Background
Chemical mapping of a 177-nucleotide RNA with DMS. The reactions ran in a buffer of 150 mM KOAc, 10 mM MgCl2 and 150 mM bicine (pH 8.5), at 24 C. Reactivities are given for positions 27 through 126. It was measured as part of the RMDB library TTRINS. For DMS, 1,692 sequencing reads were counted.
RNA sequence: GGGAACGACUCGAGUAGAGUCGAAAAGAUAUGGACCCGAUAAGUACGAUCUCCAACAGCUGGACCUGCUUUCGGAAACGAAAGCAGGUCCAGACAUGGAGUAGUACUUUUGACGGGUCCUAAGUCACUAUUUAAUCCACUUCGGUGGAUUAAAUAGAAAAGAAACAACAACAACAAC
Reactivity to DMS in 0.01 (KOAc 150mM, MgCl2 10mM, bicine 150mM(pH8.5), 24C), signal-to-noise 2, nucleotides 027 to 126: g020a060u010a300u000g000g020a010c000c000c000g010a150u010a030a020g020u000a000c010g000a180u000c000u000c020c000a030a160c300a190g020c020u000g030g000a030c000c000u010g020c000u010u000u020c010g010g000a110a110a250c020g010a020a020a000g000c010a030g000g010u010c000c010a000g030a000c070a140u010g010g000a010g000u000a180g000u000a000c000u000u000u000u000g010a210c080g010g000g000u010c000c000u000a000a140g000u000c030a250